[RMDB]
RNA sequence: GGGAACGACUCGAGUAGAGUCGAAAAUCCUAAGUCCGUGCUGAGUUUGUCUUGGAUUUACUUAGGGAGUCUCGGAAACGAGACAUCGAUCUAAGUUGUCAGACAAACGAAAGCACGGAUAUGGAAAAAUCAAGAGGGUGUUCGCACCCUCUUGAAACCAUCAUAAUAAGUUCGCUUAUUAUGAUGGAAAAGAAACAACAACAACAAC
Reactivity to 2A3 in 0.01 (KOAc 150mM, MgCl2 10mM, bicine 150mM(pH8.5), 24C), signal-to-noise 4, nucleotides 027 to 156: u030c010c000u030a090a010g030u000c000c000g000u010g000c000u000g020a030g030u000u000u000g010u010c030u080u200g190g010a100u260u240u200a010c000u000u000a010g010g030g010a020g010u000c000u000c020g030g030a140a100a050c010g000a000g010a000c010a140u130c010g060a040u040c000u000a000a000g010u000u010g010u010c000a000g000a010c010a020a000a000c000g000a020a000a000g000c000a000c000g000g000a000u000a000u010g000g020a000a040a020a010a010u030c010a000a000g010a000g000g020g010u020g050u090u140c190g080c070a000c000c030c000u010c020u000u000g000a000a000a000
Reactivity to DMS in 0.01 (KOAc 150mM, MgCl2 10mM, bicine 150mM(pH8.5), 24C), signal-to-noise 2, nucleotides 027 to 156: u010c000c000u000a110a130g030u000c030c030g070u010g020c000u000g020a300g000u000u000u000g000u000c000u000u020g030g010a060u000u000u000a030c030u000u000a010g000g000g000a040g000u010c010u000c000g000g000a140a160a250c000g010a020g020a000c000a080u010c100g010a100u000c000u000a010a000g030u000u000g000u000c000a110g010a020c000a010a030a020c000g010a230a200a060g010c000a010c010g000g000a010u000a070u000g000g000a000a100a120a140a170u000c000a020a010g000a040g050g040g050u000g000u000u000c300g050c000a030c000c010c010u000c000u000u000g000a020a110a180